[RMDB]
An RNA of 177 nucleotides, treated with DMS and read out base by base. Conditions: 150 mM KOAc, 10 mM MgCl2 and 150 mM bicine (pH 8.5), 24 C. The data come from the RNA Mapping Database (RMDB), library M2PK90.
RNA sequence: GGGAACGACUCGAGUAGAGUCGAAAAGCAUAGCGUCAAGUUGGUUGACCAGAAGUCUGGUUAGCAAACAGAGUAAAACCAAAAGGUUAGACGCACUCUGUGUAAAAGUACGAAAGUACAAAGAUAAGGUACGUAUUCCGUUCGCGGAAUACGUACCAAAAGAAACAACAACAACAAC
Reactivity to DMS in 0.01 (KOAc 150mM, MgCl2 10mM, bicine 150mM(pH8.5), 24C), signal-to-noise 1, nucleotides 027 to 126: g040c140a080u020a000g000c040g000u040c010a240a080g030u000u000g050g030u000u000g000a000c010c010a000g000a300a220g000u000c000u000g000g000u000u000a000g000c060a020a010a000c000a090g000a100g000u000a070a040a020a040c000c000a100a120a110a080g030g020u000u000a070g000a100c040g010c060a100c060u000c050u000g030u030g010u000a030a110a030a160g010u000a000c000g000a220a040a080g000u010a010c000a000a000a060g000a110u000a160a150